This 207-nucleotide RNA was probed chemically with 2A3. Conditions: 150 mM KOAc, 10 mM MgCl2 and 150 mM bicine (pH 8.5), 24 C.

RNA sequence: GGGAACGACUCGAGUAGAGUCGAAAAAGCCUGGUCGAUACGUCGACCAGGCAAUGCCGCCACAACGGCUUCCUGGCGUGGCGGAUCUCAUCCAAUGGAGCAACGCUACGGAUACGUCCGGAGCGAAAAAAGCUCUGCUUCUUCGGAAGCAGAGCAACUUUGAUACUCAGUUCGCUGAGUAUCAAAGAAAAGAAACAACAACAACAAC
Reactivity to 2A3 in 0.01 (KOAc 150mM, MgCl2 10mM, bicine 150mM(pH8.5), 24C), signal-to-noise 1, nucleotides 027 to 156: a010g300c000c000u000g000g000u000c000g000a020u030a100c220g070u020c000g020a000c000c000a000g000g000c000a000a000u000g020c000c000g010c000c010a030c010a040a020c050g130g000c000u140u220c030c020u010g010g000c020g000u000g000g000c020g000g000a010u020c050u020c030a070u100c090c070a090a130u220g010g000a010g020c010a110a000c000g000c000u020a000c000g000g020a020u010a080c190g160u020c000c000g000g000a000g000c000g120a070a000a000a000a000a000g020c000u000c000u000g000c000u000u000c000u030u040c100g090g000a000a010g000c000a000g000a000g010c000a010a000

Reactivities are given for positions 27 through 156.